[RMDB]
RNA sequence: GGGAACGACUCGAGUAGAGUCGAAAAUACCGUCUUCUCCCCGACGGUUUCAAUACAUAGCUUCACGUUGUGUAGCGUAGGUGGAAGGUAUCGUGUGGUGUAUAAACACCACAUAGUCUCUUAGGGGUCAAGCUGAUAAACUUCGGUUUAUCAGCAAAGACGAUUAGUAGUUCGCUACUAAUCGUCUAAAAGAAACAACAACAACAAC
Reactivity to DMS in 0.01 (KOAc 150mM, MgCl2 10mM, bicine 150mM(pH8.5), 24C), signal-to-noise 3, nucleotides 027 to 156: u000a050c010c010g030u000c020u010u000c060u000c020c030c050c100g000a030c020g010g010u000u010u000c110a110a180u040a070c050a090u000a050g020c050u000u000c130a110c100g030u040u000g060u010g000u000a010g000c100g060u000a060g000g010u000g010g000a080a060g000g030u010a050u010c030g050u000g020u000g000g050u000g000u000a160u010a120a110a100c000a030c000c000a010c000a010u000a010g030u010c030u010c020u010u000a140g020g020g000g000u000c030a070a200g030c010u000g000a010u000a010a010a030c000u000u010c300g060g000u000u000u000a010u000c000a000g030c000a000a010
Reactivity to 2A3 in 0.01 (KOAc 150mM, MgCl2 10mM, bicine 150mM(pH8.5), 24C), signal-to-noise 5, nucleotides 027 to 156: u090a010c000c000g020u000c030u160u030c030u070c000c020c000c010g000a000c000g000g020u010u050u060c070a060a020u070a020c020a020u100a060g010c010u090u140c050a030c100g270u180u140g040u050g060u110a040g020c030g070u050a040g060g040u040g030g040a090a030g040g010u080a040u180c050g000u010g000u000g000g010u010g020u010a070u110a250a230a010c000a000c000c000a000c000a000u010a000g020u000c010u000c000u130u100a040g010g010g000g000u040c060a040a030g010c000u000g000a000u000a010a010a000c010u020u060c080g030g000u000u000u000a000u000c000a000g000c000a000a000
Chemical mapping of a 207-nucleotide RNA with DMS and 2A3. For DMS the reverse transcriptase was MarathonRT. The 2A3 profile rests on 3,989 reads. 2A3 adducts were read by reverse transcription with SuperScript II with manganese.